[RMDB]
RNA sequence: GGGAACGACUCGAGUAGAGUCGAAAAUGACGGGAGGCGGUGCGAUCUCCCGGAUACGGCGCAACGAUGUGGUGCCCCUGGCCACACAGACCCGCUUGCCCGACAGGUCGGACACCUUUGUGAUCGGGUAAGGUUGGACUUUCGAGUCCAACCUUACAAAAGAAACAACAACAACAAC
Reactivity to 2A3 in 0.01 (KOAc 150mM, MgCl2 10mM, bicine 150mM(pH8.5), 24C), signal-to-noise 2, nucleotides 027 to 126: u130g010a000c000g000g030g000a030g000g010c040g090g080u210g030c050g060a070u040c000u020c020c000c000g000g000a000u000a030c050g010g040c010g000c050a130a060c080g130a160u020g040u040g040g020u040g040c000c000c000c000u060g030g000c020c020a000c000a000c020a020g110a140c000c000c000g020c050u040u040g020c040c000c000g020a030c030a040g010g050u060c070g020g020a040c000a050c040c000u060u090u100g100u040g010a080u050c020g000g040
Reactivity to DMS in 0.01 (KOAc 150mM, MgCl2 10mM, bicine 150mM(pH8.5), 24C), signal-to-noise 1, nucleotides 027 to 126: u060g000a150c000g000g000g010a020g000g010c030g010g000u030g010c030g000a180u050c050u000c030c000c150g110g000a070u000a110c040g000g000c000g000c100a090a070c110g000a100u000g060u020g000g000u000g000c000c040c020c010u000g000g000c000c000a030c030a080c070a110g030a150c030c030c050g010c050u000u010g040c000c010c000g010a120c040a050g000g000u000c030g000g000a050c020a010c050c030u000u030u060g000u000g000a110u000c050g020g010

This 177-nucleotide RNA was probed chemically with 2A3 and DMS. Conditions: 150 mM KOAc, 10 mM MgCl2 and 150 mM bicine (pH 8.5), 24 C. DMS adducts were read by reverse transcription with MarathonRT. 2A3 adducts were read by reverse transcription with SuperScript II with manganese.